[RMDB]
Record summary:
Source: RMDB library PDB130, as collected in RNAgym. An RNA of 207 nucleotides, treated with 2A3 and read out base by base. 2A3 adducts were read by reverse transcription with SuperScript II with manganese. The RNA was probed in 150 mM KOAc, 10 mM MgCl2 and 150 mM bicine (pH 8.5) at 24 C. The 2A3 profile rests on 522 reads.
RNA sequence: GGGAACGACUCGAGUAGAGUCGAAAAGAUACCUUCCUCAAUCAAGAACCAAAGUGUGGAGAUCGAAGAUGAUUAGAGACCAUUGUAGUCCACACUGCAAACGAUGACACCCAUGAAUUGGGGAUCUUAUGGGCCGGCCUGCGGCAGGGUUUACCCUCGAAGGCAAUUUGUUCGCAAAUUGCCUUCGAAAAGAAACAACAACAACAAC
Reactivity to 2A3 in 0.01 (KOAc 150mM, MgCl2 10mM, bicine 150mM(pH8.5), 24C), signal-to-noise 1, nucleotides 027 to 156: g070a020u070a070c000c010u010u050c000c020u000c000a080a030u020c040a000a090g080a090a180c060c070a090a030a110g000u050g000u020g050g010a070g010a070u200c030g070a130a040g020a070u050g000a020u030u150a070g070a040g010a130c030c030a000u020u130g050u180a020g020u090c000c010a020c010a000c020u010g000c040a080a130a020c020g080a020u080g060a030c000a060c040c050c000a050u110g110a060a040u200u050g010g000g000g000a000u010c020u040u150a160u120g070g080g000c060c020g020g040c000c030u070g070c060g010g000c020a020g060g010g000u010u080u140a070c020c010c000u000